[RMDB]
RNA sequence: GGGAACGACUCGAGUAGAGUCGAAAAGGAGUCCUGGCGGGCAUAGCGUAUUUCUCCAUGGUGGGGAACUGGGCGAAGGUCCUGGUAGUGCUGCUGCUAUUUGCCGGCGUCGACGCGGAAACCCACGCCUCUGAGCAUACUUCGGUAUGCUCAGAGGAAAAGAAACAACAACAACAAC
Reactivity to 2A3 in 0.01 (KOAc 150mM, MgCl2 10mM, bicine 150mM(pH8.5), 24C), signal-to-noise 4, nucleotides 027 to 126: g100g000a030g020u070c020c040u060g030g040c020g060g020g000c020a010u030a010g050c020g040u090a120u020u040u000c030u000c030c030a110u230g170g070u170g080g010g010g000a020a000c020u040g080g000g000c100g080a130a030g090g030u140c000c010u090g100g040u080a120g040u030g100c040u030g000c010u050g030c000u020a090u140u140u200g040c010c000g000g040c000g090u040c010g070a030c020g020c020g040g060a050a140a110c000c000c020a030c020g000
Reactivity to DMS in 0.01 (KOAc 150mM, MgCl2 10mM, bicine 150mM(pH8.5), 24C), signal-to-noise 1, nucleotides 027 to 126: g000g020a170g000u000c000c110u010g000g010c100g000g000g000c140a000u020a100g000c050g000u000a050u000u000u000c000u010c060c000a190u040g040g010u040g000g000g020g000a010a010c060u010g000g010g010c020g060a100a180g000g050u000c090c080u000g010g030u000a100g000u020g020c030u000g000c040u020g010c000u000a080u030u050u020g000c030c050g000g000c060g020u010c150g040a070c040g010c090g000g040a090a100a120c000c000c020a130c110g000
Source: RMDB library OK1LIB, as collected in RNAgym. Structure probing data (2A3 and DMS) for a 177-nucleotide construct. The 2A3 profile rests on 1,733 reads. Values cover nucleotides 27 to 126. DMS adducts were read by reverse transcription with MarathonRT. High DMS reactivity at an A or C suggests that its Watson-Crick edge is free. The RNA was probed in 150 mM KOAc, 10 mM MgCl2 and 150 mM bicine (pH 8.5) at 24 C. 2A3 is a SHAPE reagent: it acylates the 2'-hydroxyl of flexible nucleotides of all four kinds.